[RMDB]
RNA sequence: GGGAACGACUCGAGUAGAGUCGAAAAGGAACCGAGCCUAGCAAAGCUUUGAGCUAGGAACGGAAUUUAUGAAGCUUACCAAAGAGAAAGUUUGUCUGUGGACGUUCUCUGAGGGAAUUUUAAAACACAAGACUACACUCGUAGAAAGUCUUACUGGCAGAUGCUUAGACUUCGGUCUAAGCAUCUGAAAAGAAACAACAACAACAAC
Reactivity to 2A3 in 0.01 (KOAc 150mM, MgCl2 10mM, bicine 150mM(pH8.5), 24C), signal-to-noise 1, nucleotides 027 to 156: g040g000a010a000c000c010g000a010g010c000c000u040a000g010c010a010a010a000g000c030u040u010u000g000a000g000c000u010a000g000g000a010a010c000g010g040a020a000u130u090u040a070u060g020a000a020g000c000u030u300a020c040c000a060a010a000g020a000g010a000a020a000g000u000u010u000g010u010c010u000g010u000g000g000a000c000g000u020u000c000u000c000u010g010a030g000g010g020a000a000u000u040u040u170a000a000a000a000c000a000c000a070a060g010a010c010u040a010c030a040c060u110c040g110u040a020g110a200a120a090g020u070c040u110u140a110c040u040g070g000

Chemical mapping of a 207-nucleotide RNA with 2A3. The RNA was probed in 150 mM KOAc, 10 mM MgCl2 and 150 mM bicine (pH 8.5) at 24 C. For 2A3, 725 sequencing reads were counted.